This 177-nucleotide RNA was probed chemically with DMS and 2A3.
[RMDB]
RNA sequence: GGGAACGACUCGAGUAGAGUCGAAAAGAUAUGGAUGUGGCAAUUCCGUACAGGCGACGAAGUCGGAAACGACAGAGCCUUAACGGAAGCCACAUCCUAAGUCAAAAGUUGCGCUUCGGCGCAACAACGCUUCUUCAAAGUUCGCUUUGAAGAAGCGAAAAGAAACAACAACAACAAC
Reactivity to DMS in 0.01 (KOAc 150mM, MgCl2 10mM, bicine 150mM(pH8.5), 24C), signal-to-noise 3, nucleotides 027 to 126: g010a040u000a300u010g000g010a010u000g030u000g000g020c000a090a150u000u000c000c000g000u010a170c300a080g000g030c010g010a110c170g010a110a070g000u010c000g000g010a030a080a170c020g020a030c000a020g000a200g020c000c020u000u030a230a040c000g000g000a030a040g000c000c000a000c000a000u010c000c000u000a000a060g000u010c010a120a090a090a110g000u000u000g010c020g000c000u000u000c260g000g030c000g000c000a000a000c000a070a140
Reactivity to 2A3 in 0.01 (KOAc 150mM, MgCl2 10mM, bicine 150mM(pH8.5), 24C), signal-to-noise 2, nucleotides 027 to 126: g020a010u070a040u200g010g000a000u010g000u010g010g020c040a170a300u110u000c000c000g000u030a030c090a090g000g000c000g050a300c040g040a280a020g000u010c020g000g030a080a030a040c000g010a000c000a020g010a010g000c010c000u010u010a140a020c000g000g020a000a000g000c000c000a000c000a000u000c010c010u000a000a000g010u010c010a000a090a090a100g000u000u000g000c010g000c020u010u140c300g090g000c000g000c000a000a000c000a000a020
2A3 adducts were read by reverse transcription with SuperScript II with manganese. Reactivities are given for positions 27 through 126. For DMS the reverse transcriptase was MarathonRT. The DMS profile rests on 1,810 reads.